[RMDB]
RNA sequence: GGGAACGACUCGAGUAGAGUCGAAAAGCCAUUCCGACUGGACAGUGGAUUUGGAUUAUUUCUCUUUUCUUUCUGUUAUUCAUGUGUCAGAAGCCACCACGGGCAGAAAUCGAACUUAGUCUUACAGUGGCCCGAUUUCUCUCAUCCUUUGAGGAUAAGUAAUUACGGUGUUCGCACCGUAAUUACUAAAAGAAACAACAACAACAAC
Reactivity to DMS in 0.01 (KOAc 150mM, MgCl2 10mM, bicine 150mM(pH8.5), 24C), signal-to-noise 1, nucleotides 027 to 156: g010c030c010a290u000u000c050c020g000a170c030u000g020g010a080c050a090g030u000g020g010a050u010u010u010g000g020a100u020u030a070u010u010u000c060u000c050u010u000u010u020c010u000u010u020c040u010g000u000u000a050u010u000c100a070u020g030u000g020u010c000a120g000a100a110g030c000c020a030c030c030a090c150g000g000g060c040a050g020a030a020a070u010c060g000a090a060c070u000u000a120g000u000c090u010u000a120c110a080g030u010g020g040c000c030c010g020a160u010u010u000c030u010c040u010c100a090u000c020c020u000u000u010g000a120g000g010a110u000a090
Reactivity to 2A3 in 0.01 (KOAc 150mM, MgCl2 10mM, bicine 150mM(pH8.5), 24C), signal-to-noise 3, nucleotides 027 to 156: g020c000c010a010u060u000c010c010g140a060c080u100g060g050a040c060a020g020u020g030g010a060u060u040u020g020g020a050u100u030a120u070u300u040c050u010c000u070u080u050u030c020u040u130u030c040u070g120u090u100a090u080u150c090a140u140g020u000g040u080c010a020g020a130a020g050c000c000a030c020c030a040c050g010g000g000c010a010g080a040a050a010u110c060g020a020a050c040u080u110a080g030u070c020u060u120a080c050a040g050u040g070g020c010c000c000g030a050u010u050u020c040u020c000u000c010a060u080c030c050u040u080u250g070a060g020g010a020u040a110